[RMDB]
RNA sequence: GGGAACGACUCGAGUAGAGUCGAAAACGAUCUGUUCGCAGAUCGAGCUACGGAGACGUAGCAGAGCACGACAGAGCUCUGGGUCGUGCGAUACCGGAAAUAAGACCAAUUGCACGAGUGCUAGCAGUUGGCAGAGCUCAAAGAAACAGCACUCGAACUAGGCCAUACCAUUCGUGGUAUGGCCUAGAAAAGAAACAACAACAACAAC
Reactivity to 2A3 in 0.01 (KOAc 150mM, MgCl2 10mM, bicine 150mM(pH8.5), 24C), signal-to-noise 1, nucleotides 027 to 156: c000g000a000u000c010u020g040u090u090c280g040c090a000g000a000u010c000g000a030g000c000u000a010c000g020g080a100g030a050c000g000u000a000g050c000a000g010a000g020c000a000c000g010a000c000a070g010a000g020c000u000c050u010g070g000g020u000c000g000u000g000c000g010a020u110a070c000c020g000g110a060a010a130u300a090a000g080a090c010c000a010a020u020u010g060c040a040c160g000a010g000u000g020c000u010a030g030c010a000g020u010u000g000g000c000a000g020a000g030c040u020c070a100a240a000g150a050a080a000c030a050g020c000a000c000u000c000g000a050a010
Structure probing data (2A3) for a 207-nucleotide construct. Reactivities are given for positions 27 through 156.